Record summary:
Structure probing data (DMS and 2A3) for a 207-nucleotide construct. DMS adducts were read by reverse transcription with MarathonRT. The RNA was probed in 150 mM KOAc, 10 mM MgCl2 and 150 mM bicine (pH 8.5) at 24 C.
RNA sequence: GGGAACGACUCGAGUAGAGUCGAAAAUUGAUGAUAGCUGUCUUGAGGAAUACAGAUGCUUCUUAUGGUGGGUUACACCAUGAUAAACCCAUUUUAACUUGAAAAUAUUGUACGUCAAAAUGCAUUUAAUAUGCUGAUAAGCCCAUCGUAAAGUCAAGGUUUAUGUCCAUUUCGAUGGACAUAAACCAAAAGAAACAACAACAACAAC
Reactivity to DMS in 0.01 (KOAc 150mM, MgCl2 10mM, bicine 150mM(pH8.5), 24C), signal-to-noise 1, nucleotides 027 to 156: u000u040g020a120u020g030a110u000a060g010c010u010g030u010c020u020u010g020a130g010g010a230a100u000a150c090a070g040a210u000g000c050u000u000c050u000u000a040u000g000g000u010g010g030g010u000u000a170c040a130c050c120a030u010g000a070u000a080a030a120c010c060c020a070u000u000u010u000a000a040c040u010u020g010a020a090a130a130u000a090u000u010g020u000a040c040g000u020c020a040a000a080a080u000g030c060a000u000u080u000a060a140u010a010u000g010c000u000g020a040u000a070a120g000c010c010c010a080u000c030g030u000a070a010a090g000u010c050a070a190
Reactivity to 2A3 in 0.01 (KOAc 150mM, MgCl2 10mM, bicine 150mM(pH8.5), 24C), signal-to-noise 2, nucleotides 027 to 156: u140u050g000a070u120g050a040u030a090g020c140u090g050u120c000u100u110g040a040g030g120a100a100u060a080c010a000g070a090u060g020c000u000u140c000u060u090a030u080g000g030u030g000g010g000u000u020a020c040a020c000c020a010u020g000a000u060a100a070a010c010c020c010a030u150u050u030u050a090a070c030u030u070g200a040a000a080a090u110a120u110u080g030u000a000c030g020u000c030a000a000a040a120u030g010c000a010u000u060u080a120a100u160a070u150g000c000u010g030a080u010a110a030g000c010c010c010a020u050c050g030u040a060a040a040g030u040c140a100a000